Annotation
This 177-nucleotide RNA was probed chemically with DMS and 2A3. The RNA was probed in 150 mM KOAc, 10 mM MgCl2 and 150 mM bicine (pH 8.5) at 24 C. For 2A3 the reverse transcriptase was SuperScript II with manganese.
RNA sequence: GGGAACGACUCGAGUAGAGUCGAAAAGAUAUGGAGUGGUCUUUUGACGCUUCCGUAUCGGAAACGAUACAGGAAGCGAUAAGACCCUCCUAAGUCAAACCCUAGUCACGUUCGCGUGACUAGGGAAGGUCCUUACUAUCUUCGGAUAGUAAGGACCAAAAGAAACAACAACAACAAC
Reactivity to DMS in 0.01 (KOAc 150mM, MgCl2 10mM, bicine 150mM(pH8.5), 24C), signal-to-noise 1, nucleotides 027 to 126: g000a020u000a300u000g000g000a010g070u010g020g000u000c000u000u000u010u040g020a190c020g000c000u000u000c000c010g000u000a000u000c010g020g000a060a090a210c020g030a020u000a000c000a190g060g000a000a000g040c000g010a040u000a000a030g000a020c000c020c000u000c000c000u000a000a070g010u000c030a080a090a150c010c010c000u000a000g000u000c000a010c000g020u000u020c240g040c010g040u000g000a000c000u010a000g010g000g010a000a010
Reactivity to 2A3 in 0.01 (KOAc 150mM, MgCl2 10mM, bicine 150mM(pH8.5), 24C), signal-to-noise 1, nucleotides 027 to 126: g000a010u060a030u150g000g010a000g040u300g000g000u000c030u050u140u070u160g210a140c090g020c000u010u000c000c010g000u010a000u000c000g010g010a010a020a010c010g000a010u010a020c070a170g020g000a000a010g000c000g000a010u020a000a000g000a000c000c020c000u000c000c000u000a080a030g010u040c040a020a030a300c010c000c000u000a000g000u010c010a000c010g010u040u050c270g030c000g130u000g010a010c010u000a000g000g000g010a000a030